Description: This 177-nucleotide RNA was probed chemically with 2A3 and DMS. It was measured as part of the RMDB library M2PK50. Reactivities are given for positions 27 through 126. The reactions ran in a buffer of 150 mM KOAc, 10 mM MgCl2 and 150 mM bicine (pH 8.5), at 24 C.
[RMDB]
RNA sequence: GGGAACGACUCGAGUAGAGUCGAAAAGCAAGAUGCUUCGGCAUCUUGCAGUCGUAGCGCGAUCGACAGAAUUACAGGUAUGUCGAACGAGGAAGAGCGCGCACAUCAUCCCUUUCGAGGGAUGAAACGUAAGCAGGAACUUCGGUUCCUGCUUACGAAAAGAAACAACAACAACAAC
Reactivity to 2A3 in 0.01 (KOAc 150mM, MgCl2 10mM, bicine 150mM(pH8.5), 24C), signal-to-noise 1, nucleotides 027 to 126: g000c000a000a000g000a010u010g000c000u090u140c240g090g000c000a000u010c000u000u000g000c000a000g060u020c030g030u020a020g010c000g000c000g000a030u020c000g020a010c000a000g080a090a020u250u140a130c110a060g180g000u070a040u060g010u000c000g010a040a060c060g040a110g120g110a050a100g040a030g060c000g000c000g090c030a000c010a080u060c000a000u010c000c000c000u000u090u010c190g070a020g000g000g000a000u000g010a030a020a000
Reactivity to DMS in 0.01 (KOAc 150mM, MgCl2 10mM, bicine 150mM(pH8.5), 24C), signal-to-noise 2, nucleotides 027 to 126: g000c010a010a020g000a010u010g000c000u000u000c130g030g010c010a010u000c000u000u000g020c000a080g000u000c030g020u000a080g030c000g020c010g030a160u000c000g010a020c000a010g010a140a130u000u000a150c300a160g010g000u010a120u000g000u000c010g000a010a050c040g000a120g010g000a020a080g000a180g020c000g010c000g010c020a120c180a090u000c000a020u010c000c000c000u000u010u010c190g010a060g000g010g010a000u000g000a010a060a130